[RMDB]
Structure probing data (2A3 and DMS) for a 177-nucleotide construct.
Values cover nucleotides 27 to 126.
Source: RMDB library TTRINS, as collected in RNAgym.
Conditions: 150 mM KOAc, 10 mM MgCl2 and 150 mM bicine (pH 8.5), 24 C.
RNA sequence: GGGAACGACUCGAGUAGAGUCGAAAAGAUAUGGAGUAGUACUCCUUGGAUUUAUGGUCCGAGGGCCAGGUAUGUCGGAAACGACAUACCUGGCUACAGACCAUUGUCAGGAGGCUACUCCUAAGUCCAAACAUGUUAAGUUCGCUUAACAUGUUUGAAAAGAAACAACAACAACAAC
Reactivity to 2A3 in 0.01 (KOAc 150mM, MgCl2 10mM, bicine 150mM(pH8.5), 24C), signal-to-noise 6, nucleotides 027 to 126: g050a010u140a080u300g000g000a020g010u030a010g000u220a300c030u040c000c050u010u090g150g010a060u260u300u300a010u060g000g020u000c020c030g050a300g010g000g060c010c010a000g000g000u020a010u010g000u000c010g050g020a170a090a120c000g010a000c010a000u010a000c000c010u000g000g000c000u000a000c000a000g000a000c000c000a000u000u000g000u010c000a000g000g010a000g010g000c000u000a000c000u000c000c000u000a000a000g010u010c000
Reactivity to DMS in 0.01 (KOAc 150mM, MgCl2 10mM, bicine 150mM(pH8.5), 24C), signal-to-noise 6, nucleotides 027 to 126: g000a100u000a300u010g000g000a020g020u000a010g020u010a170c000u000c000c000u000u020g020g010a030u010u010u000a010u010g010g010u000c000c000g010a300g000g000g000c000c000a010g000g010u000a010u000g000u000c000g020g000a170a110a300c010g010a010c000a010u000a000c000c000u000g010g000c000u000a000c010a010g000a020c000c000a000u000u000g010u000c010a030g000g000a030g000g000c010u000a000c000u000c000c000u000a010a080g010u000c040